An RNA of 177 nucleotides, treated with DMS and 2A3 and read out base by base.
2A3 adducts were read by reverse transcription with SuperScript II with manganese.
Source: RMDB libraries RFM100 and RFMREP, as collected in RNAgym.

RNA sequence: GGGAACGACUCGAGUAGAGUCGAAAAAGCGUCCGUUACGACGGACGCAUUGUUCCUUUUUCCUAUGCAUAUACUUCUUUGAGAGUUUGAUCUAAAGAGGCAUAGAGCAUGGGAAAAUGGGGCGAAAAUAUGAUAGAGUAUUCGUACUCUAUCAUAUAAAAGAAACAACAACAACAAC
Reactivity to DMS in 0.01 (KOAc 150mM, MgCl2 10mM, bicine 150mM(pH8.5), 24C), signal-to-noise 9, nucleotides 027 to 126: a080g010c000g010u000c000c000g020u000u000a100c190g010a050c000g010g010a010c000g020c000a000u010u010g010u000u000c000c000u000u000u000u000u000c000c000u000a000u000g020c000a180u000a010u000a040c000u000u000c000u000u000u000g010a030g010a040g010u020u030u030g010a140u000c000u000a020a010a010g000a010g000g010c020a000u000a010g000a100g010c000a000u000g000g000g000a000a000a000a010u000g000g010g000g000c010g000a060a070a090
Reactivity to 2A3 in 0.01 (KOAc 150mM, MgCl2 10mM, bicine 150mM(pH8.5), 24C), signal-to-noise 9, nucleotides 027 to 126: a000g000c000g000u000c000c000g000u020u060a110c300g020a000c000g060g000a000c000g000c000a000u000u120g000u010u020c000c000u010u010u000u000u010c000c000u010a000u000g000c010a010u000a010u010a060c010u010u030c010u030u030u150g160a060g010a040g110u150u260u300g170a150u030c000u020a000a000a000g000a000g010g000c000a000u000a010g050a050g010c000a000u000g000g000g000a000a000a000a000u020g000g000g010g000c030g030a080a060a020
The RNA was probed in 150 mM KOAc, 10 mM MgCl2 and 150 mM bicine (pH 8.5) at 24 C.